[RMDB]
RNA sequence: GGGAACGACUCGAGUAGAGUCGAAAAGAUAUGGAUAACUAAGACAUGUUAGCAAUCGGAAACGAUUGACCUAACAACAGCUUACUUAUCCUAAGUCAAAACACAGGCGUGUUCGCACGCCUGUGAAGGAUGUACAACUGUUCGCAGUUGUACAUCCAAAAGAAACAACAACAACAAC
Reactivity to DMS in 0.01 (KOAc 150mM, MgCl2 10mM, bicine 150mM(pH8.5), 24C), signal-to-noise 2, nucleotides 027 to 126: g000a010u000a020u020g000g000a010u000a010a010c050u000a020a010g030a040c060a140u020g000u000u000a010g000c000a020a000u020c000g020g000a010a010a030c010g000a030u000u000g000a200c300c040u000a000a000c010a140a120c240a120g000c000u000u000a010c170u000u000a020u000c000c000u000a000a090g000u000c010a160a080a110a210c030a020c020a000g040g000c010g050u000g000u000u040c230g030c000a010c000g000c000c010u030g000u010g000a110a050
Reactivity to 2A3 in 0.01 (KOAc 150mM, MgCl2 10mM, bicine 150mM(pH8.5), 24C), signal-to-noise 2, nucleotides 027 to 126: g000a010u030a000u070g000g020a000u010a030a000c040u010a010a010g030a040c150a240u300g020u010u010a010g030c000a000a020u000c000g010g000a000a030a010c030g020a010u000u030g150a240c000c020u010a000a010c110a080a040c110a010g000c000u020u000a010c000u010u010a010u020c000c000u000a010a000g020u020c020a020a040a110a180c000a000c000a010g000g040c020g020u010g060u080u100c200g050c120a000c010g040c000c000u030g000u000g000a010a010
An RNA of 177 nucleotides, treated with DMS and 2A3 and read out base by base. Conditions: 150 mM KOAc, 10 mM MgCl2 and 150 mM bicine (pH 8.5), 24 C.